[RMDB]
RNA sequence: GGGAACGACUCGAGUAGAGUCGAAAAACGCAAGGAACAAAAAGAGCAAGAACAUCUAAUGAAGACGACGAUGAUCUUGGAUUCCUGAACGAAGAAUCCUAAAUCAAGAUAACCCAAACUGACUCUCCGUAUUGGAACGUUUCGACGUUCCAAUACGAAAAGAAACAACAACAACAAC
Reactivity to 2A3 in 0.01 (KOAc 150mM, MgCl2 10mM, bicine 150mM(pH8.5), 24C), signal-to-noise 2, nucleotides 027 to 126: a000c040g000c070a030a020g030g020a060a030c040a050a210a040a090a000g100a000g080c020a000a020g020a010a010c000a010u020c030u070a200a060u280g090a180a080g210a070c110g020a010c050g000a020u040g040a040u000c020u030u000g020g000a030u050u020c000c010u030g060a040a000c060g050a060a150g000a050a000u000c010c030u090a110a060a050u090c050a050a000g030a120u040a050a030c010c000c040a020a080a100c050u070g060a010c010u000c050u040c140
Reactivity to DMS in 0.01 (KOAc 150mM, MgCl2 10mM, bicine 150mM(pH8.5), 24C), signal-to-noise 2, nucleotides 027 to 126: a070c090g030c120a250a000g000g010a020a030c050a110a120a090a140a100g000a110g000c010a040a000g000a080a080c040a010u000c040u000a170a070u000g020a140a100g020a010c080g010a120c230g000a030u000g000a040u010c070u000u000g010g000a180u010u000c000c010u000g050a090a130c100g000a090a050g010a040a060u010c000c000u000a040a060a080u010c020a050a000g000a080u020a080a090c020c020c000a040a040a090c200u020g010a090c070u010c030u000c100